[RMDB]
RNA sequence: GGGAACGACUCGAGUAGAGUCGAAAACUCAGUUUACACUUACAUUACAUAUGCAUUUUAACACAUCAACUAUAACACCUUUAUUUAAGUCUGUUGUGGACCAUAGAAUAUGGUAAAUUACAACAAGAAAUAUAAAGAAUUUCGAUUCUUUAUAUUUAAAAGAAACAACAACAACAAC
Reactivity to 2A3 in 0.01 (KOAc 150mM, MgCl2 10mM, bicine 150mM(pH8.5), 24C), signal-to-noise 6, nucleotides 027 to 126: c000u000c030a070g020u080u100u120a040c070a020c020u040u090a010c000a100u020u090a030c010a060u110a050u120g070c030a080u090u080u030u160a110a030c040a000c000a040u090c020a050a050c020u070a050u060a300a010c020a070c040c000u090u140u040a120u070u210u090a130a010g050u010c090u030g010u040u010g010u020g050g040a040c000c000a000u020a070g260a200a090u180a080u070g020g000u020a020a060a030u140u140a020c010a020a000c000a010a020g060
Reactivity to DMS in 0.01 (KOAc 150mM, MgCl2 10mM, bicine 150mM(pH8.5), 24C), signal-to-noise 4, nucleotides 027 to 126: c010u030c000a100g010u020u030u000a060c120a070c050u000u010a080c050a060u010u020a070c080a070u020a070u010g000c090a050u010u020u000u010a050a150c100a060c060a090u010c050a040a060c040u010a060u010a050a070c120a030c040c040u020u010u010a060u020u030u040a050a110g000u010c070u000g020u000u000g000u000g000g000a030c030c010a010u020a120g020a120a130u030a020u000g010g000u010a000a070a070u030u030a040c060a040a050c050a030a090g010